Chemical mapping of a 207-nucleotide RNA with DMS and 2A3.
DMS (dimethyl sulfate) methylates the pairing face of unpaired adenines and cytosines.
The RNA was probed in 150 mM KOAc, 10 mM MgCl2 and 150 mM bicine (pH 8.5) at 24 C.
The DMS profile rests on 3,466 reads.
The data come from the RNA Mapping Database (RMDB), library RNAMAK.
[RMDB]
RNA sequence: GGGAACGACUCGAGUAGAGUCGAAAAUCACUUUCGAGUGACUCUGGACCUUUGUGCCUAUGGAGCCAUACAAGCAGGCGAAUCCCAUUGGGAUUCGAACUACCUGUGAGUAUGGCGUUGAAAUAGGCACUCUGGUAUGUAUCGCAUUCGUGCGAAAUAUGGUGACAAGUUUCGACUUGUCACCAUAAAAAGAAACAACAACAACAAC
Reactivity to DMS in 0.01 (KOAc 150mM, MgCl2 10mM, bicine 150mM(pH8.5), 24C), signal-to-noise 2, nucleotides 027 to 156: u000c010a020c010u000u000u000c190g000a100g040u000g000a010c000u000c050u000g030g000a050c050c000u010u000u000g020u000g030c000c000u000a000u000g000g020a300g030c030c000a010u010a020c010a070a300g000c030a000g030g040c020g000a000a010u000c010c010c010a300u000u020g120g040g010a020u030u000c020g000a010a170c040u000a170c000c000u000g040u000g000a300g000u000a000u010g000g030c000g020u000u000g000a100a110a040u000a010g000g010c000a000c020u000c020u000g000g010u010a120u000g010u010a060u000c000g030c010a080u000u000c210g000u000g040c000g000a010a140a270
Reactivity to 2A3 in 0.01 (KOAc 150mM, MgCl2 10mM, bicine 150mM(pH8.5), 24C), signal-to-noise 2, nucleotides 027 to 156: u020c010a000c030u140u200u220c300g080a040g020u030g010a020c040u030c100u190g110g060a030c000c000u000u010u010g010u000g000c000c000u010a010u010g010g000a000g000c000c000a000u000a000c010a000a000g000c000a000g020g010c000g000a010a000u000c010c000c120a180u240u300g040g000g000a000u000u000c010g040a110a080c020u160a110c140c000u020g010u010g000a010g000u000a000u010g010g000c010g020u010u010g000a000a000a000u010a000g000g010c000a000c000u000c000u000g000g000u030a060u110g060u000a090u020c000g000c000a020u000u080c200g060u040g000c020g000a020a090a050